[RMDB]
RNA sequence: GGGAACGACUCGAGUAGAGUCGAAAACUUAAUAAUCGGCACUGCAGCAGUGACUGCAGUCCCUGAACAGCAGAGCCCACUGCUGCUUACUGACCAACCCCACAGGAAGGAGAAAAAGAAGAUCACCCCGUGAUAGGAGUUUCGACUCCUAUCACGGAAAAGAAACAACAACAACAAC
Reactivity to DMS in 0.01 (KOAc 150mM, MgCl2 10mM, bicine 150mM(pH8.5), 24C), signal-to-noise 1, nucleotides 027 to 126: c160u020u020a070a130u060a000a080u000c080g010g000c030a000c070u000g000c000a000g000c000a150g020u040g010a140c010u060g000c020a000g020u000c130c090c000u000g020a040a110c020a000g010c000a000g040a040g030c060c090c040a100c000u000g010c000u000g000c030u000u000a060c040u000g050a080c070c080a020a120c020c000c020c000a150c100a010g010g010a050a070g000g000a020g000a050a060a010a070a050g000a120a090g000a020u020c020a040c020c080
Reactivity to 2A3 in 0.01 (KOAc 150mM, MgCl2 10mM, bicine 150mM(pH8.5), 24C), signal-to-noise 3, nucleotides 027 to 126: c010u040u030a080a000u130a170a110u300c090g010g070c060a030c070u040g000c000a000g000c000a140g160u080g180a250c000u000g050c020a020g020u030c000c010c000u160g060a110a020c000a010g010c000a000g030a050g080c000c020c020a010c010u000g010c000u000g000c000u010u060a060c020u060g110a100c010c010a040a060c010c000c000c020a040c020a020g000g100a030a020g060g030a080g060a030a100a060a030a000g100a040a000g020a030u000c000a060c030c000